[RMDB]
Chemical mapping of a 177-nucleotide RNA with 2A3 and DMS.
RNA sequence: GGGAACGACUCGAGUAGAGUCGAAAACACUAGCAUGUCUAGCGAUCUGAUCAUCGCUCUAGCUAGUGCUAUAGCGUGAUCGCACUGUCAUGCGGAUCGAUGCGUACAGCGGAUCGUACUCACCAUGUGUCGUACGGUGUUUCGACACCGUACGACAAAAAGAAACAACAACAACAAC
Reactivity to 2A3 in 0.01 (KOAc 150mM, MgCl2 10mM, bicine 150mM(pH8.5), 24C), signal-to-noise 2, nucleotides 027 to 126: c030a000c040u090a000g050c010a020u000g020u010c060u060a050g010c010g040a040u030c070u160g070a160u090c020a030u160c060g000c000u000c000u000a000g010c020u040a080g120u050g120c010u030a050u000a010g030c000g020u020g010a000u050c040g020c020a130c060u000g000u030c000a010u010g030c000g010g010a050u030c050g030a050u080g110c020g050u060a140c070a070g040c030g020g030a050u010c030g020u050a040c000u030c030a080c020c030a090u170g040
Reactivity to DMS in 0.01 (KOAc 150mM, MgCl2 10mM, bicine 150mM(pH8.5), 24C), signal-to-noise 1, nucleotides 027 to 126: c100a130c070u000a070g010c030a070u000g000u000c100u020a070g040c020g020a060u000c050u010g040a110u020c120a030u000c050g070c000u000c030u000a140g000c000u000a050g000u000g020c020u030a000u010a040g020c030g020u000g000a010u000c030g020c050a070c090u000g000u000c010a040u010g010c020g010g000a100u010c050g000a040u000g000c020g010u000a050c060a060g080c060g000g040a030u000c080g000u000a060c030u000c040a140c160c100a170u000g000

The RNA was probed in 150 mM KOAc, 10 mM MgCl2 and 150 mM bicine (pH 8.5) at 24 C.